Chemical mapping of a 207-nucleotide RNA with 2A3. Conditions: 150 mM KOAc, 10 mM MgCl2 and 150 mM bicine (pH 8.5), 24 C.

[RMDB]
RNA sequence: GGGAACGACUCGAGUAGAGUCGAAAACUGGCAAAGAAAAACAAAACCUAGCUUUCGCUGCCUAAUAAGCAGUAGCAUAGCUGAUCCUCCGUGCAUCGCCCAUGUGCUACGGUAAGGGUCUCACUCUAAGUGGGCUACACUAGUUAAUCUCCGUCUGGCUACAGAGAGACUUCGGUCUCUCUGUAGCAAAAGAAACAACAACAACAAC
Reactivity to 2A3 in 0.01 (KOAc 150mM, MgCl2 10mM, bicine 150mM(pH8.5), 24C), signal-to-noise 1, nucleotides 027 to 156: c000u020g120g000c050a060a260a200g050a030a110a110a030a030c110a060a200a070a020c070c100u160a040g000c000u000u030u030c030g000c030u000g070c000c000u070a140a060u220a100a050g000c000a000g000u060a100g000c070a070u010a000g030c010u000g010a030u000c010c000u000c010c010g010u010g000c000a010u000c030g000c000c000c000a010u010g010u000g020c040u050a040c010g020g020u050a120a110g010g000g000u000c000u030c010a170c020u220c010u160a030a030g050u010g010g000g000c020u040a000c040a020c010u050a010g090u080u070a110a120u080c050u030c090c030g040u040c080u130g120